[RMDB]
RNA sequence: GGGAACGACUCGAGUAGAGUCGAAAACAGUGGGGAAAAUAGAACUUAAGGAAAACUUUUAAAUACAGGUAAGGAAAAGGAGAAAUACAAAACCAAUGGACUAAGAACAAUGUGAUGCUAGCUCUGUAAGUGCACUACCUUGGAAGCUAAUGUUCCAGGAUUUAAAUCGUUUCGACGAUUUAAAUCCAAAAGAAACAACAACAACAAC
Reactivity to 2A3 in 0.01 (KOAc 150mM, MgCl2 10mM, bicine 150mM(pH8.5), 24C), signal-to-noise 2, nucleotides 027 to 156: c010a010g030u030g010g000g030g010a000a050a000a090u090a050g050a120a030c000u050u090a040a010g020g000a040a050a020a010c010u030u090u090u180a030a210a020u140a020c030a020g020g020u070a030a020g070g030a070a000a030a000g000g040a030g050a010a060a040u170a040c060a010a080a040a050c070c030a010a030u080g000g000a010c030u090a060a020g020a090a020c010a020a050u120g020u020g040a010u030g040c030u020a050g030c020u010c000u070g060u060a080a030g020u020g010c020a000c060u030a050c020c000u000u000g010g000a000a060g020c020u090a090a030u110g040u070u010c010c010a010
Reactivity to DMS in 0.01 (KOAc 150mM, MgCl2 10mM, bicine 150mM(pH8.5), 24C), signal-to-noise 1, nucleotides 027 to 156: c040a070g060u010g000g000g010g000a070a030a060a060u000a090g000a120a090c060u000u010a070a130g040g010a040a100a050a110c060u020u000u000u000a020a030a160u000a060c040a020g010g020u000a100a070g000g010a050a050a060a100g010g000a090g010a080a060a130u000a190c060a040a030a130a070c040c000a030a130u000g000g020a080c040u010a030a080g000a080a080c030a070a060u000g030u010g000a110u000g040c020u010a080g030c090u000c030u000g000u010a030a080g010u000g000c000a010c030u000a060c050c030u010u000g020g010a130a040g030c010u010a080a130u010g000u010u010c010c050a250
This 207-nucleotide RNA was probed chemically with 2A3 and DMS. The DMS profile rests on 2,285 reads. Reactivities are given for positions 27 through 156. 2A3 adducts were read by reverse transcription with SuperScript II with manganese. For 2A3, 1,525 sequencing reads were counted.